The data come from the RNA Mapping Database (RMDB), library M2RFPK. The record gives the reactivity of an RNA of 207 nucleotides to 2A3 and DMS. Conditions: 150 mM KOAc, 10 mM MgCl2 and 150 mM bicine (pH 8.5), 24 C. The 2A3 profile rests on 3,319 reads. DMS adducts were read by reverse transcription with MarathonRT. 2A3 adducts were read by reverse transcription with SuperScript II with manganese.
RNA sequence: GGGAACGACUCGAGUAGAGUCGAAAAGAAUUGGUAUGUAAGCUACUUCUUCCAGUAGCUGCGUCAUAACAUCAAGGUUAUACAUACUGAGCCGAAGCUCAGCUUCGGUCCUCCAAGGAAGACCAAAUACAGCUCAGCCCGUUCGCGGGCUGAGCAACAGAUACUUAUCGUUCGCGAUAAGUAUCUGAAAAGAAACAACAACAACAAC
Reactivity to 2A3 in 0.01 (KOAc 150mM, MgCl2 10mM, bicine 150mM(pH8.5), 24C), signal-to-noise 3, nucleotides 027 to 156: g100a030a060u030u020g010g000u000a000u000g000u020a020a000g000c000u000a000c000u070u100c000u000u000c010c000a000g000u000a000g000c000u010g010c000g150u070c020a010u020a060a010c000a050u260c210a140a060g300g000u010u020a000u000a010c000a000u010a010c000u010g010a000g000c000c010g000a000a000g000c020u060c300a040g000c010u020u000c000g000g000u000c010c000u070c040c020a060a040g000g000a000a000g010a000c020c110a020a050a020u240a090c090a030g000c000u000c000a010g000c000c000c000g020u060u120c170g020c000g070g000g000c000u010g000a000g000c000a000a000
Reactivity to DMS in 0.01 (KOAc 150mM, MgCl2 10mM, bicine 150mM(pH8.5), 24C), signal-to-noise 2, nucleotides 027 to 156: g020a110a220u010u010g020g040u000a020u020g050u000a240a200g030c000u000a030c000u000u000c030u010u010c070c110a300g020u000a020g000c000u000g000c040g030u000c070a040u000a020a020c000a260u010c140a180a160g000g020u000u000a050u000a020c020a030u000a040c020u000g000a140g000c010c000g010a050a040g040c030u000c200a120g030c010u000u000c040g020g000u030c030c000u020c040c020a050a160g040g000a090a040g000a160c090c030a060a060a130u010a090c100a120g000c000u000c000a010g010c000c010c010g040u000u000c300g040c040g040g000g030c010u000g010a000g000c030a000a030